[RMDB]
This 177-nucleotide RNA was probed chemically with DMS and 2A3. Reactivities are given for positions 27 through 126. The data come from the RNA Mapping Database (RMDB), library M2PK50.
RNA sequence: GGGAACGACUCGAGUAGAGUCGAAAAGCGUCCUGGUUCGCCAGGACGCAAAUAAAUGGUAGACUGAGACCGUCUAACUCAGAAAACCAGAAAUAGACGGAAAAACUGACUUGUUCGCAAGUCAGAACCAUAGUGUAACGUUCGCGUUACACUAUGGAAAAGAAACAACAACAACAAC
Reactivity to DMS in 0.01 (KOAc 150mM, MgCl2 10mM, bicine 150mM(pH8.5), 24C), signal-to-noise 4, nucleotides 027 to 126: g020c000g020u000c000c000u000g000g010u000u010c200g040c020c000a000g000g010a000c000g010c000a000a030a030u000a030a030a070u000g000g030u000a100g010a190c010u000g000a000g020a170c010c010g020u000c010u000a010a130c000u000c010a000g000a070a080a110a290c030c010a060g000a090a050a170u000a020g010a010c000g010g000a180a060a050a090a160c010u000g000a000c000u000u000g010u000u000c200g020c020a010a000g010u000c000a010g010a070a090
Reactivity to 2A3 in 0.01 (KOAc 150mM, MgCl2 10mM, bicine 150mM(pH8.5), 24C), signal-to-noise 5, nucleotides 027 to 126: g000c000g010u000c000c010u010g010g030u050u060c210g020c080c000a020g000g000a000c000g010c000a010a000a000u010a000a020a020u100g070g030u080a040g060a220c010u010g000a000g020a080c020c000g000u010c010u030a220a140c000u000c010a000g000a070a090a020a040c010c010a010g030a020a110a010u000a010g010a000c000g000g040a050a060a010a020a000c000u000g010a000c000u010u010g010u100u120c260g000c070a000a000g010u010c000a000g010a010a020